The data come from the RNA Mapping Database (RMDB), library 15KREP. Structure probing data (2A3 and DMS) for a 177-nucleotide construct. For DMS, 7,322 sequencing reads were counted. For 2A3 the reverse transcriptase was SuperScript II with manganese. DMS adducts were read by reverse transcription with MarathonRT. The reactions ran in a buffer of 150 mM KOAc, 10 mM MgCl2 and 150 mM bicine (pH 8.5), at 24 C. The 2A3 profile rests on 4,036 reads. 2A3 is a SHAPE reagent: it acylates the 2'-hydroxyl of flexible nucleotides of all four kinds.
RNA sequence: GGGAACGACUCGAGUAGAGUCGAAAACCUCCCCGUCCUUGUCUUUUCUUAUUAUUCCUCGGACGUUUCCCAGCCAGGGGUUAUCCUCCUCAAGUCUCUUGAUAGUCUUGUUGACCUUCCGGAGGUCGUAAUGCAAAAAGUUCGCUUUUUGCAUUACAAAAGAAACAACAACAACAAC
Reactivity to 2A3 in 0.01 (KOAc 150mM, MgCl2 10mM, bicine 150mM(pH8.5), 24C), signal-to-noise 3, nucleotides 027 to 126: c000c000u000c000c000c010c010g020u010c010c010u030u060g030u050c000u010u080u040u030c010u050u150a140u110u020a090u130u090c010c000u010c010g020g000a010c010g020u000u030u030c000c010c000a010g040c020c020a020g020g050g000g000u020u070a040u040c000c010u010c000c000u030c010a030a050g080u000c020u000c000u020u030g020a030u050a020g020u010c010u060u090g100u060u090g030a010c010c000u040u030c040c050g130g010a010g010g000u010c010
Reactivity to DMS in 0.01 (KOAc 150mM, MgCl2 10mM, bicine 150mM(pH8.5), 24C), signal-to-noise 4, nucleotides 027 to 126: c040c020u000c020c010c010c030g010u010c040c020u000u000g010u010c020u000u010u000u000c040u010u010a100u010u010a140u000u000c050c010u000c040g010g010a100c040g010u010u000u000c010c000c010a160g010c080c070a080g010g000g000g020u000u010a070u000c050c010u000c020c010u000c070a070a100g010u000c010u000c030u000u000g010a100u000a070g010u000c020u000u000g010u010u000g010a050c040c020u000u000c060c060g010g010a060g010g010u000c100